[RMDB]
RNA sequence: GGGAACGACUCGAGUAGAGUCGAAAAAUAUGAAUGCGGAGAGUGCCCAUGGAUAUGGAUGGAUAUGGAUGGAUGUGCGGUUGUGCCAAUGGCGGCAGCUGGGCCGAGCACUCGAAUCCAGUCGGAGAAUGAGUGGGGAUUUCGAUCCCCACUCAUUAAAAGAAACAACAACAACAAC
Reactivity to DMS in 0.01 (KOAc 150mM, MgCl2 10mM, bicine 150mM(pH8.5), 24C), signal-to-noise 3, nucleotides 027 to 126: a060u010a050u050g030a120a100u020g000c020g020g000a120g000a040g010u000g000c030c000c050a010u020g020g000a090u020a030u010g000g010a110u000g020g010a050u010a030u000g000g010a030u020g000g030a060u000g010u000g040c010g020g000u030u010g020u040g040c000c030a080a180u030g000g010c090g000g000c110a050g000c020u030g010g030g020c020c010g000a130g010c040a020c050u000c050g010a230a060u010c010c020a040g000u000c040g030g010a150g000
Reactivity to 2A3 in 0.01 (KOAc 150mM, MgCl2 10mM, bicine 150mM(pH8.5), 24C), signal-to-noise 1, nucleotides 027 to 126: a020u080a020u050g220a120a040u150g000c020g000g020a070g000a010g050u080g000c000c000c000a050u040g080g000a050u020a070u080g090g000a060u040g070g000a010u020a050u130g250g000a010u100g030g000a020u050g040u050g010c020g040g080u110u000g010u150g000c000c080a140a130u280g050g000c060g060g000c000a060g010c000u060g030g020g000c000c000g000a000g030c000a000c000u000c020g000a000a000u070c010c010a000g130u100c040g100g000a200g020
The data come from the RNA Mapping Database (RMDB), library OK1LIB. The record gives the reactivity of an RNA of 177 nucleotides to DMS and 2A3. For 2A3 the reverse transcriptase was SuperScript II with manganese. The reactions ran in a buffer of 150 mM KOAc, 10 mM MgCl2 and 150 mM bicine (pH 8.5), at 24 C. Reactivities are given for positions 27 through 126.